Source: RMDB library OK1LIB, as collected in RNAgym. The record gives the reactivity of an RNA of 177 nucleotides to 2A3 and DMS. For 2A3, 598 sequencing reads were counted. For 2A3 the reverse transcriptase was SuperScript II with manganese.
[RMDB]
RNA sequence: GGGAACGACUCGAGUAGAGUCGAAAAGACGCCUAAUGGCGAAAAUGUAAACUCAACUACACACAAGAUAAAUACAAGUGCUAAAUGUCGUAACUAGUUGAUCUAGUCCAGCGGUGAGAUCCGCAGAGCGGGAUAGGAGUUUCGACUCCUAUCCCGCAAAAGAAACAACAACAACAAC
Reactivity to 2A3 in 0.01 (KOAc 150mM, MgCl2 10mM, bicine 150mM(pH8.5), 24C), signal-to-noise 2, nucleotides 027 to 126: g010a010c010g030c010c030u230a300a110u200g000g000c000g040a000a070a000a030u240g010u210a010a010a010c000u010c040a000a000c010u050a040c010a010c010a000c010a060a080g030a090u170a100a120a010u150a050c070a080a000g080u040g110c000u180a080a170a080u120g050u090c040g000u000a000a040c020u020a030g000u000u010g040a050u010c020u020a040g040u020c040c080a040g000c000g010g020u080g060a040g000a020u020c000c000g010c000a000g000a010
Reactivity to DMS in 0.01 (KOAc 150mM, MgCl2 10mM, bicine 150mM(pH8.5), 24C), signal-to-noise 1, nucleotides 027 to 126: g000a200c020g020c000c000u000a140a010u000g000g000c000g000a000a030a120a050u000g000u000a060a110a110c040u000c060a050a040c050u000a060c140a220c010a130c050a140a020g000a010u030a040a030a120u040a060c010a050a000g000u000g000c080u020a140a120a080u000g000u050c000g020u000a150a130c080u000a050g000u000u000g000a070u000c040u050a050g000u040c070c120a050g020c000g040g000u000g000a280g020a030u030c000c000g100c000a020g040a260
Record summary: Values cover nucleotides 27 to 126.